[RMDB]
RNA sequence: GGGAACGACUCGAGUAGAGUCGAAAAAUGUUGGUGAUAGUGCGGAAGUUGCAGUUAAAAUGUUUAAAAAAAACUUUUAACGUACCAAUGGAAAAACUCAAAACACUUGUUGCAACUGCAGAAGCUGAUACUACAGACUUCGGUCUGUAGAAAAGAAACAACAACAACAAC
Reactivity to 2A3 in 0.01 (KOAc 150mM, MgCl2 10mM, bicine 150mM(pH8.5), 24C), signal-to-noise 3, nucleotides 027 to 129: a060u100g010u040u000g030g040u100g040a070u040a130g040u060g070c010g050g060a060a020g000u000u010g000c040a000g000u010u030a020a000a000a010u260g010u020u070u190a120a140a040a050a000a000a010a010c010u000u010u000u020a000a000c000g000u000a070c010c000a000a080u090g070g000a040a060a020a060a050c040u080c110a100a100a030a000c100a050c070u030u070g040u040u060g000c020a040a040c010u000g000c030a030g010a050a050g050c040u070g000a040u050a100
Reactivity to DMS in 0.01 (KOAc 150mM, MgCl2 10mM, bicine 150mM(pH8.5), 24C), signal-to-noise 5, nucleotides 027 to 129: a070u040g000u000u040g050g000u070g010a080u010a060g010u010g000c000g000g000a170a050g040u010u000g010c000a110g040u040u000a000a000a000a000u010g010u010u000u010a000a010a000a040a030a020a000a000c050u100u000u000u010a000a000c020g030u050a050c260c000a060a060u040g050g020a030a040a040a050a060c090u070c120a020a010a010a010c150a050c120u010u020g010u040u010g030c030a030a030c040u090g030c060a060g000a070a070g000c060u050g030a060u100a100
An RNA of 170 nucleotides, treated with 2A3 and DMS and read out base by base.
2A3 adducts were read by reverse transcription with SuperScript II with manganese.
As a SHAPE reagent, 2A3 marks flexible, mostly unpaired nucleotides at the ribose 2'-OH.